[RMDB]
RNA sequence: GGGAACGACUCGAGUAGAGUCGAAAACAAGGACUUAUUCAAGAAGCAGGAAUUAGAAUUAAACAAUUGAUGGAGCAAAAUUUAACAAUUGAAACAAAGUCAAAUCCGAAUGACCUUGUUACAAAUGGUGAAGUAGAGAUUUCGAUCUCUACUUCACAAAAGAAACAACAACAACAAC
Reactivity to 2A3 in 0.01 (KOAc 150mM, MgCl2 10mM, bicine 150mM(pH8.5), 24C), signal-to-noise 3, nucleotides 027 to 126: c010a020a000g020g050a020c030u070u070a030u090u100c050a100a090g060a130a030g100c080a050g100g050a030a060u090u050a080g050a040a030u100u100a170a110a020c000a010a070u030u040g040a040u100g080g030a030g030c050a010a070a160a190u080u210u100a070a050c020a030a050u030u010g040a130a030a000c020a000a030a000g030u030c000a000a050a090u080c060c050g020a020a010u020g000a010c000c010u000u010g010u020u040a070c030a010a120a010u180g090
Reactivity to DMS in 0.01 (KOAc 150mM, MgCl2 10mM, bicine 150mM(pH8.5), 24C), signal-to-noise 2, nucleotides 027 to 126: c030a020a030g000g040a150c090u010u000a040u000u000c030a110a100g000a120a080g040c110a130g020g010a030a100u000u000a130g000a080a060u000u000a100a110a130c010a030a050u000u000g020a040u000g010g000a100g020c050a020a060a060a050u000u020u020a060a080c040a020a060u000u000g000a080a010a040c110a030a050a070g020u000c000a000a060a060u000c040c060g010a080a050u000g000a070c000c010u000u000g000u000u000a090c090a040a050a090u000g000
The record gives the reactivity of an RNA of 177 nucleotides to 2A3 and DMS. The 2A3 profile rests on 2,488 reads.